[RMDB]
Conditions: 150 mM KOAc, 10 mM MgCl2 and 150 mM bicine (pH 8.5), 24 C. Structure probing data (2A3 and DMS) for a 177-nucleotide construct. For DMS the reverse transcriptase was MarathonRT.
RNA sequence: GGGAACGACUCGAGUAGAGUCGAAAACAUUCAUUGUGAGCCAGGCUGAGUUGGCAGAGGACGAGGGCCAGGUGGCAUCCACCAGCUACAGCAAGGCCACUGUUCUGGAGGGAGUCGGCAGCAUUGCAUACGAUGCGAAUUUCGAUUCGCAUCGUAUAAAAGAAACAACAACAACAAC
Reactivity to 2A3 in 0.01 (KOAc 150mM, MgCl2 10mM, bicine 150mM(pH8.5), 24C), signal-to-noise 2, nucleotides 027 to 126: c020a020u140u150c010a060u140u150g040u020g040a050g000c020c010a030g000g060c010u020g000a000g020u040u000g030g000c090a050g060a130g140g040a060c100g090a140g020g120g000c000c010a050g100g240u260g130g000c000a020u000c020c000a010c010c010a000g010c010u090a260c010a030g000c050a010a060g020g000c000c010a010c020u060g040u070u000c050u030g100g000a060g020g000g020a020g030u050c020g000g000c030a030g000c050a100u040u210g000c020
Reactivity to DMS in 0.01 (KOAc 150mM, MgCl2 10mM, bicine 150mM(pH8.5), 24C), signal-to-noise 3, nucleotides 027 to 126: c100a090u010u000c120a060u000u000g020u000g000a090g020c010c010a060g020g030c020u000g010a070g010u000u000g000g020c130a100g000a110g000g000a090c170g000a110g020g010g030c010c020a140g010g030u010g010g000c030a130u000c010c010a180c010c000a030g020c030u010a070c030a030g000c020a050a030g000g000c010c010a060c000u000g000u000u000c080u010g000g000a090g010g000g010a040g010u000c030g010g000c080a100g010c060a070u010u010g010c200

Source: RMDB library OK2TRN, as collected in RNAgym.